The record gives the reactivity of an RNA of 177 nucleotides to DMS and 2A3. The reactions ran in a buffer of 150 mM KOAc, 10 mM MgCl2 and 150 mM bicine (pH 8.5), at 24 C. Values cover nucleotides 27 to 126. The data come from the RNA Mapping Database (RMDB), library OK1LIB.
[RMDB]
RNA sequence: GGGAACGACUCGAGUAGAGUCGAAAACUAAGGAGCGUGUGCUGGCGGCGGUCCUUCACGGUGCGUUGAUCCGGGCGGAUUACCAGUACGUGCGCGAGUGGUGUGCGCUGCUCGGAGCAACGGAAAAGGUUGUGCGCUCGUUCGUGGGCGCACGACCAAAAGAAACAACAACAACAAC
Reactivity to DMS in 0.01 (KOAc 150mM, MgCl2 10mM, bicine 150mM(pH8.5), 24C), signal-to-noise 5, nucleotides 027 to 126: c040u010a060a080g010g020a070g010c050g020u000g020u010g020c000u000g010g000c050g000g000c020g000g000u010c020c020u000u010c060a100c110g000g010u010g010c030g000u010u000g000a090u000c010c010g000g000g010c010g000g010a100u030u030a080c030c040a060g020u020a120c040g010u010g000c050g010c030g000a140g010u010g000g020u010g010u020g000c180g010c000u000g000c010u000c000g000g000a050g000c020a010a010c010g000g010a040a080a080a110
Reactivity to 2A3 in 0.01 (KOAc 150mM, MgCl2 10mM, bicine 150mM(pH8.5), 24C), signal-to-noise 6, nucleotides 027 to 126: c030u040a020a060g080g010a040g030c010g010u040g000u040g020c020u020g020g000c000g010g010c000g010g040u020c000c000u030u040c050a050c050g110g030u160g040c020g010u000u020g010a040u000c000c000g000g000g010c020g030g020a050u080u160a080c010c000a010g040u070a040c010g020u040g010c070g000c020g020a050g080u060g010g020u030g010u040g040c080g000c020u010g000c000u000c000g000g000a010g000c000a000a020c000g010g000a020a030a000a020